[RMDB]
RNA sequence: GGGAACGACUCGAGUAGAGUCGAAAACCUAUCCAAAAUGAGAUCCCAUCUUGCACACUGUGCUAAUUUGAGAUUCUCAUGCCUCCUACUGGGAGAGAUCUGGACUAGAAGUCAGGGCAUCUGACUCAAUACAUUCGUCAGUUCGCUGACGAAUGAACUGUAUCUGACCCUUCGGGGUCAGAUACAGAAAAGAAACAACAACAACAAC
Reactivity to 2A3 in 0.01 (KOAc 150mM, MgCl2 10mM, bicine 150mM(pH8.5), 24C), signal-to-noise 2, nucleotides 027 to 156: c010c000u010a030u070c010c010a020a050a000a100u030g000a000g000a010u010c060c000c000a030u000c010u020u040g000c000a000c030a110c200u300g010u020g020c060u160a060a060u000u000u000g040a050g000a040u300u110c000u000c000a020u050g050c000c000u000c000c000u020a260c130u270g050g000g000a000g010a010g000a100u080c050u040g020g050a030c010u010a040g030a120a000g060u000c010a000g070g040g170c110a150u100c090u010g000a010c000u020c030a080a170u130a080c010a010u000u010c000g010u020c030a010g020u090u130c160g050c140u000g000a000c000g000a010a000u000g000a010a020

Chemical mapping of a 207-nucleotide RNA with 2A3. Values cover nucleotides 27 to 156. The RNA was probed in 150 mM KOAc, 10 mM MgCl2 and 150 mM bicine (pH 8.5) at 24 C.